[RMDB]
RNA sequence: GGGAACGACUCGAGUAGAGUCGAAAAGUCUCCUAGAGAGCUUGGCCGUCGGGGCUUACACCCCGACUUGCUGAGUUUCUCUAGGAGAGUCCCUUUCCCAGCCAGAGGUGGCUGGUCAAACAAUACCAAAACUCUUGCUAGUUCGCUAGCAAGAGAAGUACGCAUAUAUCUUCGGAUAUAUGCGUACAAAAGAAACAACAACAACAAC
Reactivity to 2A3 in 0.01 (KOAc 150mM, MgCl2 10mM, bicine 150mM(pH8.5), 24C), signal-to-noise 1, nucleotides 027 to 156: g040u010c000u020c010c000u000a000g000a000g000a000g000c000u000u000g000g000c000c010g020u010c000g010g000g030g000c040u120u130a080c100a070c030c010c000c000g000a020c010u000u090g010c000u000g000a000g000u010u300u020c000u000c010u000a000g000g010a000g000a010g000u000c010c000c010u000u100u010c010c000c000a000g000c000c000a000g010a030g000g020u000g000g000c000u030g060g060u230c040a010a020a050c090a130a000u000a000c000c000a000a060a050a090c000u000c000u010u010g000c000u000a010g000u030u040c230g000c100u000a000g000c000a000a000g000a000g000a010a020
This 207-nucleotide RNA was probed chemically with 2A3. The RNA was probed in 150 mM KOAc, 10 mM MgCl2 and 150 mM bicine (pH 8.5) at 24 C. Reactivities are given for positions 27 through 156. Source: RMDB library M2RFPK, as collected in RNAgym.